[RMDB]
RNA sequence: GGGAACGACUCGAGUAGAGUCGAAAACGACAGAACUUCGGUUCUGUCGAAAUAAAAUCAGCGGUUAAAAAGCUGGCGUUAUAACCGCUGAACCCCAGCUUAAAAGAUUCGUGUUCGCACGAAUCAACCAUCGUCAAAAGUUCGCUUUUGACGAUGGAAAAGAAACAACAACAACAAC
Reactivity to 2A3 in 0.01 (KOAc 150mM, MgCl2 10mM, bicine 150mM(pH8.5), 24C), signal-to-noise 1, nucleotides 027 to 126: c000g020a000c000a000g000a010a000c010u030u080c230g100g000u000u000c000u010g000u000c000g000a000a000a000u070a010a060a010a080u020c010a000g000c010g000g010u040u050a100a110a070a030a030g050c080u090g140g020c050g000u000u070a040u000a070a000c000c000g000c000u000g000a000a000c030c000c000c000a030g050c070u130u160a010a060a120a030g000a000u010u000c000g010u020g030u090u080c240g010c060a000c010g010a000a000u000c000a010a000
Reactivity to DMS in 0.01 (KOAc 150mM, MgCl2 10mM, bicine 150mM(pH8.5), 24C), signal-to-noise 1, nucleotides 027 to 126: c060g010a020c000a010g010a020a000c000u000u000c170g030g020u000u000c000u000g010u000c000g030a010a030a160u000a030a040a170a070u000c000a000g020c030g000g000u010u040a040a080a100a090a040g020c070u000g020g020c060g020u000u000a210u000a010a000c010c000g030c000u000g000a000a090c080c000c000c120a210g040c240u050u030a050a130a180a060g000a020u000u000c000g000u030g000u000u010c240g030c000a020c000g000a000a010u000c000a030a080
Background:
This 177-nucleotide RNA was probed chemically with 2A3 and DMS. It was measured as part of the RMDB library M2PK50. For 2A3 the reverse transcriptase was SuperScript II with manganese. High 2A3 reactivity points to a flexible backbone, as in loops and unpaired stretches. For DMS the reverse transcriptase was MarathonRT. For 2A3, 1,467 sequencing reads were counted.